Source information: Chemical mapping of a 177-nucleotide RNA with DMS and 2A3. For DMS the reverse transcriptase was MarathonRT. Source: RMDB library OK1LIB, as collected in RNAgym.
[RMDB]
RNA sequence: GGGAACGACUCGAGUAGAGUCGAAAACUCGCCAGGAUCUCCCAGUGAGUCUGGCGCCACCCAUUGUGGCGUUCAACAACUUACUUUGCAAGAGAGGGACGCUGAAGGAGGUUUUCUCCGCCUGUAAGCUAAUUAGUCAGUUCGCUGACUAAUUAGCAAAAGAAACAACAACAACAAC
Reactivity to DMS in 0.01 (KOAc 150mM, MgCl2 10mM, bicine 150mM(pH8.5), 24C), signal-to-noise 4, nucleotides 027 to 126: c150u020c000g000c000c000a070g000g000a110u010c010u000c010c030c140a120g010u030g000a050g010u010c050u000g000g000c000g000c110c100a050c000c180c110a210u030u030g010u010g000g010c000g000u010u010c040a070a120c130a160a120c020u000u010a020c060u030u010u020g000c100a050a060g000a160g040a080g020g010g010a040c030g010c010u010g000a130a080g010g010a000g020g010u000u000u020u020c020u000c000c020g000c140c070u010g000u040a110a160
Reactivity to 2A3 in 0.01 (KOAc 150mM, MgCl2 10mM, bicine 150mM(pH8.5), 24C), signal-to-noise 9, nucleotides 027 to 126: c010u010c010g070c020c020a020g040g040a160u050c010u000c030c010c010a020g020u070g100a010g000u020c020u010g010g000c000g000c010c000a020c010c060c050a140u080u300g050u030g030g000c020g110u240u250c040a080a080c010a040a000c040u010u040a020c000u120u210u300g110c120a120a010g060a020g020a060g070g020g010a010c040g020c070u040g030a060a030g030g030a020g020g000u070u020u160u090c040u030c030c020g050c010c020u130g050u100a110a030

The reactions ran in a buffer of 150 mM KOAc, 10 mM MgCl2 and 150 mM bicine (pH 8.5), at 24 C.